[RMDB]
RNA sequence: GGGAACGACUCGAGUAGAGUCGAAAACACCUGGAGCCACUUCCACGGAGCGUACAUCCCAUCGAAGCCGGGUAAUUCGUUUCCGAAUCAACUCGCCCUCGCAGUGCUCCAAGGCGAGGAACUCAACCUAUGUUUGGUAUUUCGAUACCAAACAUAGAAAAGAAACAACAACAACAAC
Reactivity to 2A3 in 0.01 (KOAc 150mM, MgCl2 10mM, bicine 150mM(pH8.5), 24C), signal-to-noise 6, nucleotides 027 to 126: c060a030c010c040u010g020g040a010g060c080c070a100c080u100u000c040c010a050c090g030g000a020g050c020g020u030a030c030a150u050c020c000c000a020u090c090g100a060a010g070c080c010g010g030g000u040a040a070u050u060c020g050u060u210u040c080c030g040a030a050u060c030a070a070c010u020c040g040c000c000c010u000c000g000c040a070g050u020g140c000u000c030c010a020a000g020g000c010g000a000g000g030a030a020c040u050c060a030a060c010
Reactivity to DMS in 0.01 (KOAc 150mM, MgCl2 10mM, bicine 150mM(pH8.5), 24C), signal-to-noise 6, nucleotides 027 to 126: c110a110c060c040u010g000g020a080g000c040c100a150c070u000u000c020c080a130c240g000g010a060g020c060g020u000a080c170a170u000c010c000c010a110u010c160g010a050a040g010c150c020g020g000g020u000a130a070u000u000c030g010u010u000u000c130c020g020a050a050u010c090a050a060c040u010c020g000c120c000c010u010c040g000c050a070g010u010g010c030u010c020c010a110a130g000g000c060g010a020g000g000a080a090c130u000c110a090a120c240

Chemical mapping of a 177-nucleotide RNA with 2A3 and DMS. For 2A3, 12,266 sequencing reads were counted. Conditions: 150 mM KOAc, 10 mM MgCl2 and 150 mM bicine (pH 8.5), 24 C.